[RMDB]
RNA sequence: GGGAACGACUCGAGUAGAGUCGAAAAGCGUAUCGUGACCGCCGACCUGAAGUCCGAUCAGGGACUCGAGCUUGCGCUCAAACUCAUCGCCAAGGCCGACGUGUUGAUCGAGGGUUACCGUCCCGGCCAUCUUGGAGACCUUCGGGUCUCCAAGAUGAAAAGAAACAACAACAACAAC
Reactivity to 2A3 in 0.01 (KOAc 150mM, MgCl2 10mM, bicine 150mM(pH8.5), 24C), signal-to-noise 1, nucleotides 027 to 126: g010c010g020u060a040u100c040g050u040g040a030c000c030g020c010c000g030a050c020c010u040g060a120a010g060u000c000c010g020a100u050c090a020g010g000g090a060c010u050c100g010a010g010c010u190u160g080c070g000c040u060c040a060a090a000c030u020c030a100u060c070g000c050c020a050a020g120g000c050c000g030a050c010g020u100g060u230u090g060a090u060c010g000a100g030g060g030u050u060a040c010c050g030u030c050c010c000g000g050c000
Reactivity to DMS in 0.01 (KOAc 150mM, MgCl2 10mM, bicine 150mM(pH8.5), 24C), signal-to-noise 2, nucleotides 027 to 126: g020c060g050u000a090u010c050g030u010g000a090c030c010g020c030c040g010a110c020c010u030g000a130a100g010u010c070c000g020a060u000c200a130g020g000g000a080c060u000c130g030a030g010c050u000u010g020c300g010c020u010c070a080a120a130c060u010c070a090u000c050g000c100c070a160a050g000g010c070c010g020a050c030g030u000g000u000u020g010a060u000c060g010a080g010g010g020u000u000a080c120c060g010u000c030c020c010g010g010c180
The record gives the reactivity of an RNA of 177 nucleotides to 2A3 and DMS.